[RMDB]
RNA sequence: GGGAACGACUCGAGUAGAGUCGAAAAAGCAACGAGUGUGUGUGGGACGUUUUAUCCCAAGCUCUGAGUAGAGCACGCGCUGACACACACCGCGAGCGAGCAUCAGCAGAGCGCAAACGCUGGUAAACAUGUCGUUGAAGUUCGCUUCAACGACAUGAAAAGAAACAACAACAACAAC
Reactivity to DMS in 0.01 (KOAc 150mM, MgCl2 10mM, bicine 150mM(pH8.5), 24C), signal-to-noise 4, nucleotides 027 to 126: a060g000c030a150a030c030g000a220g010u010g020u000g030u000g030u000g000g000g020a080c100g000u000u010u000u000a160u010c040c000c030a070a140g010c000u000c010u000g010a160g020u020a040g000a010g030c020a050c090g020c040g010c010u020g000a080c000a010c020a020c010a010c030c020g000c040g000a210g010c010g010a070g020c140a040u000c040a040g010c010a090g000a110g010c060g000c060a070a100a120c150g010c020u000g010g000u010a060a090a180
Reactivity to 2A3 in 0.01 (KOAc 150mM, MgCl2 10mM, bicine 150mM(pH8.5), 24C), signal-to-noise 2, nucleotides 027 to 126: a000g060c080a050a040c040g010a100g090u040g000u000g020u000g000u010g000g030g000a030c040g010u000u040u150u230a140u060c000c010c020a000a020g000c000u000c000u040g300a200g150u300a020g150a000g020c050a010c070g080c000g000c010u140g090a010c020a000c000a000c000a020c000c000g040c030g000a020g000c020g010a020g050c010a040u010c000a000g020c030a010g050a050g070c120g030c070a040a060a010c070g010c030u020g010g070u090a050a010a000

This 177-nucleotide RNA was probed chemically with DMS and 2A3. Conditions: 150 mM KOAc, 10 mM MgCl2 and 150 mM bicine (pH 8.5), 24 C. For 2A3 the reverse transcriptase was SuperScript II with manganese. DMS adducts were read by reverse transcription with MarathonRT. The DMS profile rests on 3,290 reads.